[RMDB]
RNA sequence: GGGAACGACUCGAGUAGAGUCGAAAAGAUAUGGACGUGCAAGGGAGAGCGAUAUCGGAAACGAUAUCCGGCUCGAAGAACUUGACACGUCCUAAGUCAAAGCGCUGGACGUUCGCGUCCAGCGCAACAGAUCUAAAAUGUUCGCAUUUUAGAUCUGAAAAGAAACAACAACAACAAC
Reactivity to DMS in 0.01 (KOAc 150mM, MgCl2 10mM, bicine 150mM(pH8.5), 24C), signal-to-noise 3, nucleotides 027 to 126: g000a020u000a050u000g000g000a010c000g030u000g010c000a020a020g000g020g030a030g010a010g020c030g000a010u000a000u000c000g030g010a010a000a020c010g000a010u000a000u000c090c300g070g040c000u000c000g000a120a150g000a130a300c000u000u000g000a170c000a000c000g000u000c000c000u000a000a040g010u010c020a100a150a160g010c020g020c000u000g000g000a020c000g030u000u020c260g020c010g000u010c000c000a010g000c010g000c000a010a040
Reactivity to 2A3 in 0.01 (KOAc 150mM, MgCl2 10mM, bicine 150mM(pH8.5), 24C), signal-to-noise 3, nucleotides 027 to 126: g000a010u010a010u050g000g000a010c000g010u000g000c000a020a010g020g060g010a300g010a000g100c010g000a000u010a000u010c000g000g010a010a000a010c010g000a000u000a000u020c030c120g220g000c000u000c000g060a190a150g040a000a010c000u020u000g100a140c000a000c020g000u000c000c000u010a000a000g010u000c020a070a180a050g000c010g020c000u000g020g000a010c000g050u070u120c300g050c000g120u000c000c000a000g000c000g000c000a000a000
An RNA of 177 nucleotides, treated with DMS and 2A3 and read out base by base. Conditions: 150 mM KOAc, 10 mM MgCl2 and 150 mM bicine (pH 8.5), 24 C. For DMS, 6,076 sequencing reads were counted.